The record gives the reactivity of an RNA of 207 nucleotides to 2A3. The RNA was probed in 150 mM KOAc, 10 mM MgCl2 and 150 mM bicine (pH 8.5) at 24 C. 2A3 adducts were read by reverse transcription with SuperScript II with manganese.
RNA sequence: GGGAACGACUCGAGUAGAGUCGAAAAGCGUACUACCUAGGUUUGUACUUGGAUUUAUUUAGCGACGAAGCUCUAUCCCAAAUAGGAUAGAGCAGAGCUAAAUUGUCAGUACAAACCUAGGUAUCGCAAAAUCUCACAGACUUUCGAGUCUGUGAGAGCGGUGUUAGUGUUUCGACACUAACACCGCAAAAGAAACAACAACAACAAC
Reactivity to 2A3 in 0.01 (KOAc 150mM, MgCl2 10mM, bicine 150mM(pH8.5), 24C), signal-to-noise 1, nucleotides 027 to 156: g010c010g000u010a070c050u010a000c010c000u030a010g010g010u000u000u000g000u020a000c100u090u150g060g060a000u280u290u030a040u000u030u000a260g010c040g300a300c010g030a230a000g000c040u020c000u000a000u000c000c000c010a110a300a170u300a090g000g010a000u000a000g000a000g030c020a000g020a000g000c000u000a010a000a000u020u040g000u000c000a000g000u000a000c000a010a000a000c000c000u000a000g000g000u000a000u010c000g000c000a000a020a000a100u020c000u000c000a000c000a000g010a000c000u060u170u300c300g060a000g000u000c000u000g000u000g000a000g000a000